RNA sequence: GGGAACGACUCGAGUAGAGUCGAAAAGAUAUGGAUCAAGAACUACAAACCGGUUAAGCGAAGAACCUCACUAUCAUCGGAAACGAUGAUAGUGAGGGGAGCUUAACGUUUGCUUGAUCCUAAGUCACGAUAUAGAAGUCUUCGGACUUCUAUAUCGAAAAGAAACAACAACAACAAC
Reactivity to DMS in 0.01 (KOAc 150mM, MgCl2 10mM, bicine 150mM(pH8.5), 24C), signal-to-noise 4, nucleotides 027 to 126: g010a060u010a300u010g000g000a020u010c000a000a010g010a080a060c140u010a300c010a010a020a020c120c300g050g030u000u000a000a000g010c000g020a090a180g000a090a210c010c010u000c010a000c010u000a000u000c010a000u000c000g000g020a110a100a190c010g010a000u000g010a010u000a000g020u000g000a010g000g000g000g000a050g010c000u000u000a000a000c010g020u000u000u000g000c000u000u000g000a020u000c000c010u000a040a080g000u010c060a260
Reactivity to 2A3 in 0.01 (KOAc 150mM, MgCl2 10mM, bicine 150mM(pH8.5), 24C), signal-to-noise 2, nucleotides 027 to 126: g020a040u150a010u170g000g000a010u010c000a000a000g010a140a120c060u300a050c300a030a020a010c060c120g170g050u010u000a000a010g010c050g200a300a020g010a130a100c000c000u020c020a000c000u000a000u010c010a000u020c010g060g000a080a050a030c020g000a000u010g000a000u000a000g000u000g000a000g000g000g000g000a000g000c000u000u000a010a000c020g000u010u000u030g010c000u000u020g000a000u000c000c000u020a130a030g010u030c020a020
Record summary
Conditions: 150 mM KOAc, 10 mM MgCl2 and 150 mM bicine (pH 8.5), 24 C. The record gives the reactivity of an RNA of 177 nucleotides to DMS and 2A3. For 2A3, 6,190 sequencing reads were counted. Values are in units of 0.01, from 0 to 300, in steps of 10.